Chemical mapping of a 177-nucleotide RNA with DMS and 2A3.

[RMDB]
RNA sequence: GGGAACGACUCGAGUAGAGUCGAAAAGAUUCUCCGAGAGAGGACAGUCAUUUGUGGAAAGAGAAUGCUGCUGCUUAGCUCCAUUAAAGACUCUGAGAAGUCCUGCAGCAGAGAAACCUAUUAAACCACAGUAGCAGUAGUUCGCUACUGCUACUGUAAAAGAAACAACAACAACAAC
Reactivity to DMS in 0.01 (KOAc 150mM, MgCl2 10mM, bicine 150mM(pH8.5), 24C), signal-to-noise 3, nucleotides 027 to 126: g020a150u010u000c020u000c030c050g020a140g000a120g020a100g020g010a070c070a070g010u000c080a090u000u000u010g020u000g010g010a060a110a060g000a050g010a040a080u000g010c000u000g000c020u000g000c010u010u000a120g000c090u000c030c030a080u000u000a070a080a110g010a060c050u010c090u020g010a110g000a130a120g030u000c000c030u000g000c020a010g000c010a010g010a090g010a050a100a110c070c060u000a110u010u010a070a050a130c110c080
Reactivity to 2A3 in 0.01 (KOAc 150mM, MgCl2 10mM, bicine 150mM(pH8.5), 24C), signal-to-noise 2, nucleotides 027 to 126: g010a060u050u000c020u010c010c040g000a020g000a010g000a000g150g010a030c030a020g070u080c020a090u000u180u120g040u060g040g050a120a080a040g070a020g050a020a000u080g000c000u010g000c000u010g020c000u070u040a040g030c050u050c050c020a020u040u120a090a110a000g030a050c000u000c070u150g190a170g050a300a010g000u020c010c000u000g010c020a020g000c030a000g020a000g000a030a050a000c030c000u070a120u290u160a200a080a000c020c090

The 2A3 profile rests on 1,196 reads. Conditions: 150 mM KOAc, 10 mM MgCl2 and 150 mM bicine (pH 8.5), 24 C.